Chemical mapping of a 177-nucleotide RNA with 2A3 and DMS. Conditions: 150 mM KOAc, 10 mM MgCl2 and 150 mM bicine (pH 8.5), 24 C. The data come from the RNA Mapping Database (RMDB), library OK1LIB. Reactivities are given for positions 27 through 126. 2A3 adducts were read by reverse transcription with SuperScript II with manganese. For DMS, 18,507 sequencing reads were counted.
RNA sequence: GGGAACGACUCGAGUAGAGUCGAAAAGAAGAGAAUACCGGUGUAAGUGCAGCCCGUCUUACACCGUAAGGCACAGCGGAAACGCUGAUGUGAAAUACAGGGCUGUGAGACGGAAGUAGACCGUCAACGUAAAUUAAUGGUUCGCCAUUAAUUUACGAAAAGAAACAACAACAACAAC
Reactivity to 2A3 in 0.01 (KOAc 150mM, MgCl2 10mM, bicine 150mM(pH8.5), 24C), signal-to-noise 9, nucleotides 027 to 126: g120a030a010g100a010g070a110a070u120a140c040c010g000g000u010g000u000a010a010g010u030g090c020a000g000c010c000c000g010u020c000u000u000a000c010a000c000c000g000u050a020a060g140g000c010a000c000a010g000c000g010g020a080a060a010c010g000c000u010g020a120u000g020u020g060a090a040a010u250a060c110a070g000g000g000c010u010g030u050g030a130g000a000c010g010g010a130a090g080u150a040g080a090c000c000g000u000c020a010a020
Reactivity to DMS in 0.01 (KOAc 150mM, MgCl2 10mM, bicine 150mM(pH8.5), 24C), signal-to-noise 5, nucleotides 027 to 126: g020a110a070g020a140g010a140a100u040a070c180c000g000g000u010g000u000a010a010g000u000g020c020a020g000c000c000c000g000u040c000u000u000a000c000a010c010c000g010u030a040a050g010g000c020a040c000a010g010c000g000g010a170a060a140c010g020c000u000g000a080u000g020u000g010a110a060a100u060a050c120a110g000g000g010c000u010g000u030g000a130g000a010c010g010g010a090a130g010u020a100g010a110c010c000g000u000c000a090a090